[RMDB]
RNA sequence: GGGAACGACUCGAGUAGAGUCGAAAAGUGUGCUAUACUAGUAAGGUUGAAUGAAUCAACCCUUGGUGCUUAGCUUCUUUCACCCAGCAUAUUACACGCGGAUAACCGCCAAAGGAGAAAAGAUGAACUGCCCGACGAUUCUUCGGAAUCGUCGGAAGGGAUGAAAUUGGUUCGCCAAUUUCAUCCCAAAAGAAACAACAACAACAAC
Reactivity to 2A3 in 0.01 (KOAc 150mM, MgCl2 10mM, bicine 150mM(pH8.5), 24C), signal-to-noise 2, nucleotides 027 to 156: g020u040g050u080g070c010u030a040u010a130c010u030a010g120u180a240a130g000g000u020u000g050a090a140u160g140a140a270u060c000a000a000c000c000c010u020u080g010g000u030g030c040u020u090a000g000c000u020u000c010u030u070u070c020a100c000c010c000a010g030c010a010u080a040u140u300a120c070a020c140g030c010g010g010a110u080a230a270c000c030g050c020c030a060a060a040g090g040a030g050a040a140a010a110g150a060u100g030a050a090c040u090g000c020c000c000g000a000c000g000a000u000u000c010u010u010c060g010g000a000a000u000c000g000u000c010g000g010a000a000